This 207-nucleotide RNA was probed chemically with DMS and 2A3.
The reactions ran in a buffer of 150 mM KOAc, 10 mM MgCl2 and 150 mM bicine (pH 8.5), at 24 C.
RNA sequence: GGGAACGACUCGAGUAGAGUCGAAAAGCAGCCAGGACCAAAACCACCUGCAGCACAUUUCUCAAAUCUGCUCCCUGAUCGAUUUGCAGGUUCGAUGUGAUUAAUUCAGGACGUGUCCAGCUGGAAUUCAGCUGGGUCUCAGAAGAUACCUCAAAGAUAAAUAAUCACCGUUCGCGGUGAUUAUUUAAAAAGAAACAACAACAACAAC
Reactivity to DMS in 0.01 (KOAc 150mM, MgCl2 10mM, bicine 150mM(pH8.5), 24C), signal-to-noise 1, nucleotides 027 to 156: g010c050a080g020c100c060a110g000g020a280c060c060a000a020a110a150c010c080a050c040c020u010g010c030a190g010c050a080c050a140u000u000u020c050u010c050a040a040a070u020c010u000g000c040u000c070c010c000u010g000a090u010c020g020a170u000u000u000g000c020a050g050g020u000u010c020g010a070u000g010u000g030a090u000u000a040a130u020u000c000a050g040g020a150c040g020u000g010u020c020c010a030g000c050u000g010g000a140a260u000u010c030a010g020c030u000g010g000g030u000c000u010c010a090g010a020a070g010a180u000a070c010c010u000c020a040a120a190g000a290
Reactivity to 2A3 in 0.01 (KOAc 150mM, MgCl2 10mM, bicine 150mM(pH8.5), 24C), signal-to-noise 2, nucleotides 027 to 156: g010c000a010g020c010c060a040g000g080a160c040c030a000a100a100a120c040c010a010c020c000u040g000c060a030g070c040a080c010a090u090u270u020c040u030c000a030a150a030u030c030u050g020c030u060c030c020c030u090g040a060u040c020g030a050u050u010u150g040c030a000g010g000u030u040c050g010a060u030g010u010g040a090u080u160a090a090u100u160c060a060g010g010a030c080g050u050g020u010c000c000a000g000c000u000g020g080a140a140u230u170c000a000g000c010u000g000g000g000u030c020u000c020a020g010a070a000g010a070u100a090c020c000u030c090a060a040a010g140a030